[RMDB]
RNA sequence: GGGAACGACUCGAGUAGAGUCGAAAAGAUAUGGAGAUACUUGACCAGAUAUCCAGCUUUUGACGCUUGACACUCGGAAACGAGUGGAGAGCGAUAAGCUGAUAUCUGGUCAAGUAUCUCCUAAGUCGUACUCAGUGAAGUUCGCUUCACUGAGUACAAAAGAAACAACAACAACAAC
Reactivity to DMS in 0.01 (KOAc 150mM, MgCl2 10mM, bicine 150mM(pH8.5), 24C), signal-to-noise 1, nucleotides 027 to 126: g000a120u010a300u000g020g000a050g000a010u000a020c000u010u010g010a040c000c000a000g020a020u010a000u000c210c070a000g000c010u000u000u000u000g070a270c050g020c000u010u000g030a300c010a000c000u010c000g000g000a120a120a220c000g000a000g010u000g010g010a300g010a020g030c010g030a040u010a010a030g020c010u000g000a000u010a010u010c000u010g000g000u000c000a020a000g000u000a000u000c000u000c000c000u000a000a020g020u010c110